[RMDB]
RNA sequence: GGGAACGACUCGAGUAGAGUCGAAAACGUUGGGCAAAUGAUGGCAAUCGUUUGAAAUGGGUAGGUGAAUCCUCGGGCCAGUAAAUAGAUCCCAUUAUUUUCUGGUUCUAAUGACUAAAUUAUGGGAGCCCAGUAAUCCAUUCGUGGAUUACUGGGCAAAAGAAACAACAACAACAAC
Reactivity to 2A3 in 0.01 (KOAc 150mM, MgCl2 10mM, bicine 150mM(pH8.5), 24C), signal-to-noise 1, nucleotides 027 to 126: c030g000u060u140g000g020g000c070a070a060a000u120g160a020u080g030g030c060a010a060u090c090g010u040u010u020g170a130a140a170u120g000g000g050u030a080g060g020u100g060a150a030u050c020c000u000c010g000g000g000c060c000a000g000u000a010a000a010u090a000g060a060u000c030c000c000a000u020u000a000u000u040u000u000c000u000g000g000u000u100c030u000a100a230u190g080a000c040u200a140a030a100u300u180a030u020g000g010g000a010
Reactivity to DMS in 0.01 (KOAc 150mM, MgCl2 10mM, bicine 150mM(pH8.5), 24C), signal-to-noise 1, nucleotides 027 to 126: c040g000u000u020g020g000g090c110a090a090a060u030g010a090u040g010g070c110a090a070u000c000g040u000u020u020g000a240a030a070u020g000g010g120u010a090g000g000u120g000a040a030u000c010c000u000c300g000g000g000c040c000a000g000u010a000a000a030u000a020g000a180u000c010c020c000a020u000u000a000u000u040u040u100c150u000g000g000u000u000c030u020a030a060u010g020a000c170u060a070a150a060u000u040a010u000g050g030g000a020
About this RNA
Structure probing data (2A3 and DMS) for a 177-nucleotide construct. For 2A3 the reverse transcriptase was SuperScript II with manganese. The 2A3 profile rests on 438 reads. For DMS the reverse transcriptase was MarathonRT. For DMS, 1,106 sequencing reads were counted. Reactivities are given for positions 27 through 126. Source: RMDB library OK1LIB, as collected in RNAgym.